This 177-nucleotide RNA was probed chemically with 2A3 and DMS. For 2A3, 78,959 sequencing reads were counted. For DMS, 29,590 sequencing reads were counted. Conditions: 150 mM KOAc, 10 mM MgCl2 and 150 mM bicine (pH 8.5), 24 C. DMS adducts were read by reverse transcription with MarathonRT.

RNA sequence: GGGAACGACUCGAGUAGAGUCGAAAAGUGCUUGAGCACUGAGAGUUCGCUCUCUGUCGUUGAUGCGAUCCGGAAAGCAUUUGCGACUGAUGUCGAUCCGGAAAGACAUCUGUGCUCUUGCACGAAAGGGACAGGCGUGCUUCGGCAUGCUUGUCCCAAAAGAAACAACAACAACAAC
Reactivity to 2A3 in 0.01 (KOAc 150mM, MgCl2 10mM, bicine 150mM(pH8.5), 24C), signal-to-noise 9, nucleotides 027 to 126: g000u000g000c000u010u010g000a000g000c000a010c020u010g010a000g000a000g010u100u140c200g030c070u000c000u000c000u010g030u030c020g040u020u060g010a000u000g000c010g050a120u050c030c010g040g080a090a030a010g000c000a010u000u010u080g010c020g020a010c020u020g010a000u010g030u060c010g020a090u050c050c040g070g060a050a030a010g010a010c000a000u000c010u010g000u000g000c000u000c000u000u000g000c000a000c000g000a040a010a000
Reactivity to DMS in 0.01 (KOAc 150mM, MgCl2 10mM, bicine 150mM(pH8.5), 24C), signal-to-noise 7, nucleotides 027 to 126: g000u000g000c000u000u000g010a030g010c000a010c000u000g000a010g010a020g030u010u040c180g010c010u010c010u000c000u010g000u010c050g020u000u010g010a000u000g010c010g010a210u020c010c030g010g000a110a130a300g000c010a010u000u000u020g010c020g000a020c020u000g000a010u000g000u010c010g000a210u030c040c040g010g010a070a120a300g000a070c000a000u000c010u010g010u000g000c000u000c000u000u000g000c010a000c010g010a030a070a100